[RMDB]
RNA sequence: GGGAACGACUCGAGUAGAGUCGAAAAGGUGGAAUGCUAAUAACUGGGAUAACGCAGCGGCAGCAGAUGGUUACACUAUCGACAAUAGACCUACUGUAGGUUCUAUCGCUCAAACAGAUGUAGGUUAAUCCGUGUCACGUUUCGACGUGACACGGAUAAAAGAAACAACAACAACAAC
Reactivity to DMS in 0.01 (KOAc 150mM, MgCl2 10mM, bicine 150mM(pH8.5), 24C), signal-to-noise 1, nucleotides 027 to 126: g010g000u010g000g010a050a050u000g000c000u000a020a200u030a070a070c070u000g000g000g000a050u000a110a190c160g000c000a040g000c100g000g030c190a040g000c210a020g000a190u010g000g000u000u000a000c070a100c010u000a050u020c190g000a130c020a100a070u000a000g040a010c080c080u000a090c070u000g000u060a050g000g000u050u060c000u000a000u000c040g000c160u000c130a100a030a030c000a020g000a100u000g000u000a070g000g000u000u000a090
Reactivity to 2A3 in 0.01 (KOAc 150mM, MgCl2 10mM, bicine 150mM(pH8.5), 24C), signal-to-noise 3, nucleotides 027 to 126: g120g000u030g000g040a060a060u210g000c000u000a040a020u120a150a110c060u000g000g000g150a080u010a170a130c060g000c020a020g000c010g010g000c010a000g000c040a000g050a030u110g060g010u070u130a060c230a030c030u100a090u090c100g020a020c020a060a010u080a030g040a020c040c000u030a050c030u120g100u300a020g040g050u150u010c040u110a180u110c020g010c050u050c050a140a170a080c050a020g070a000u020g010u040a000g000g050u080u060a040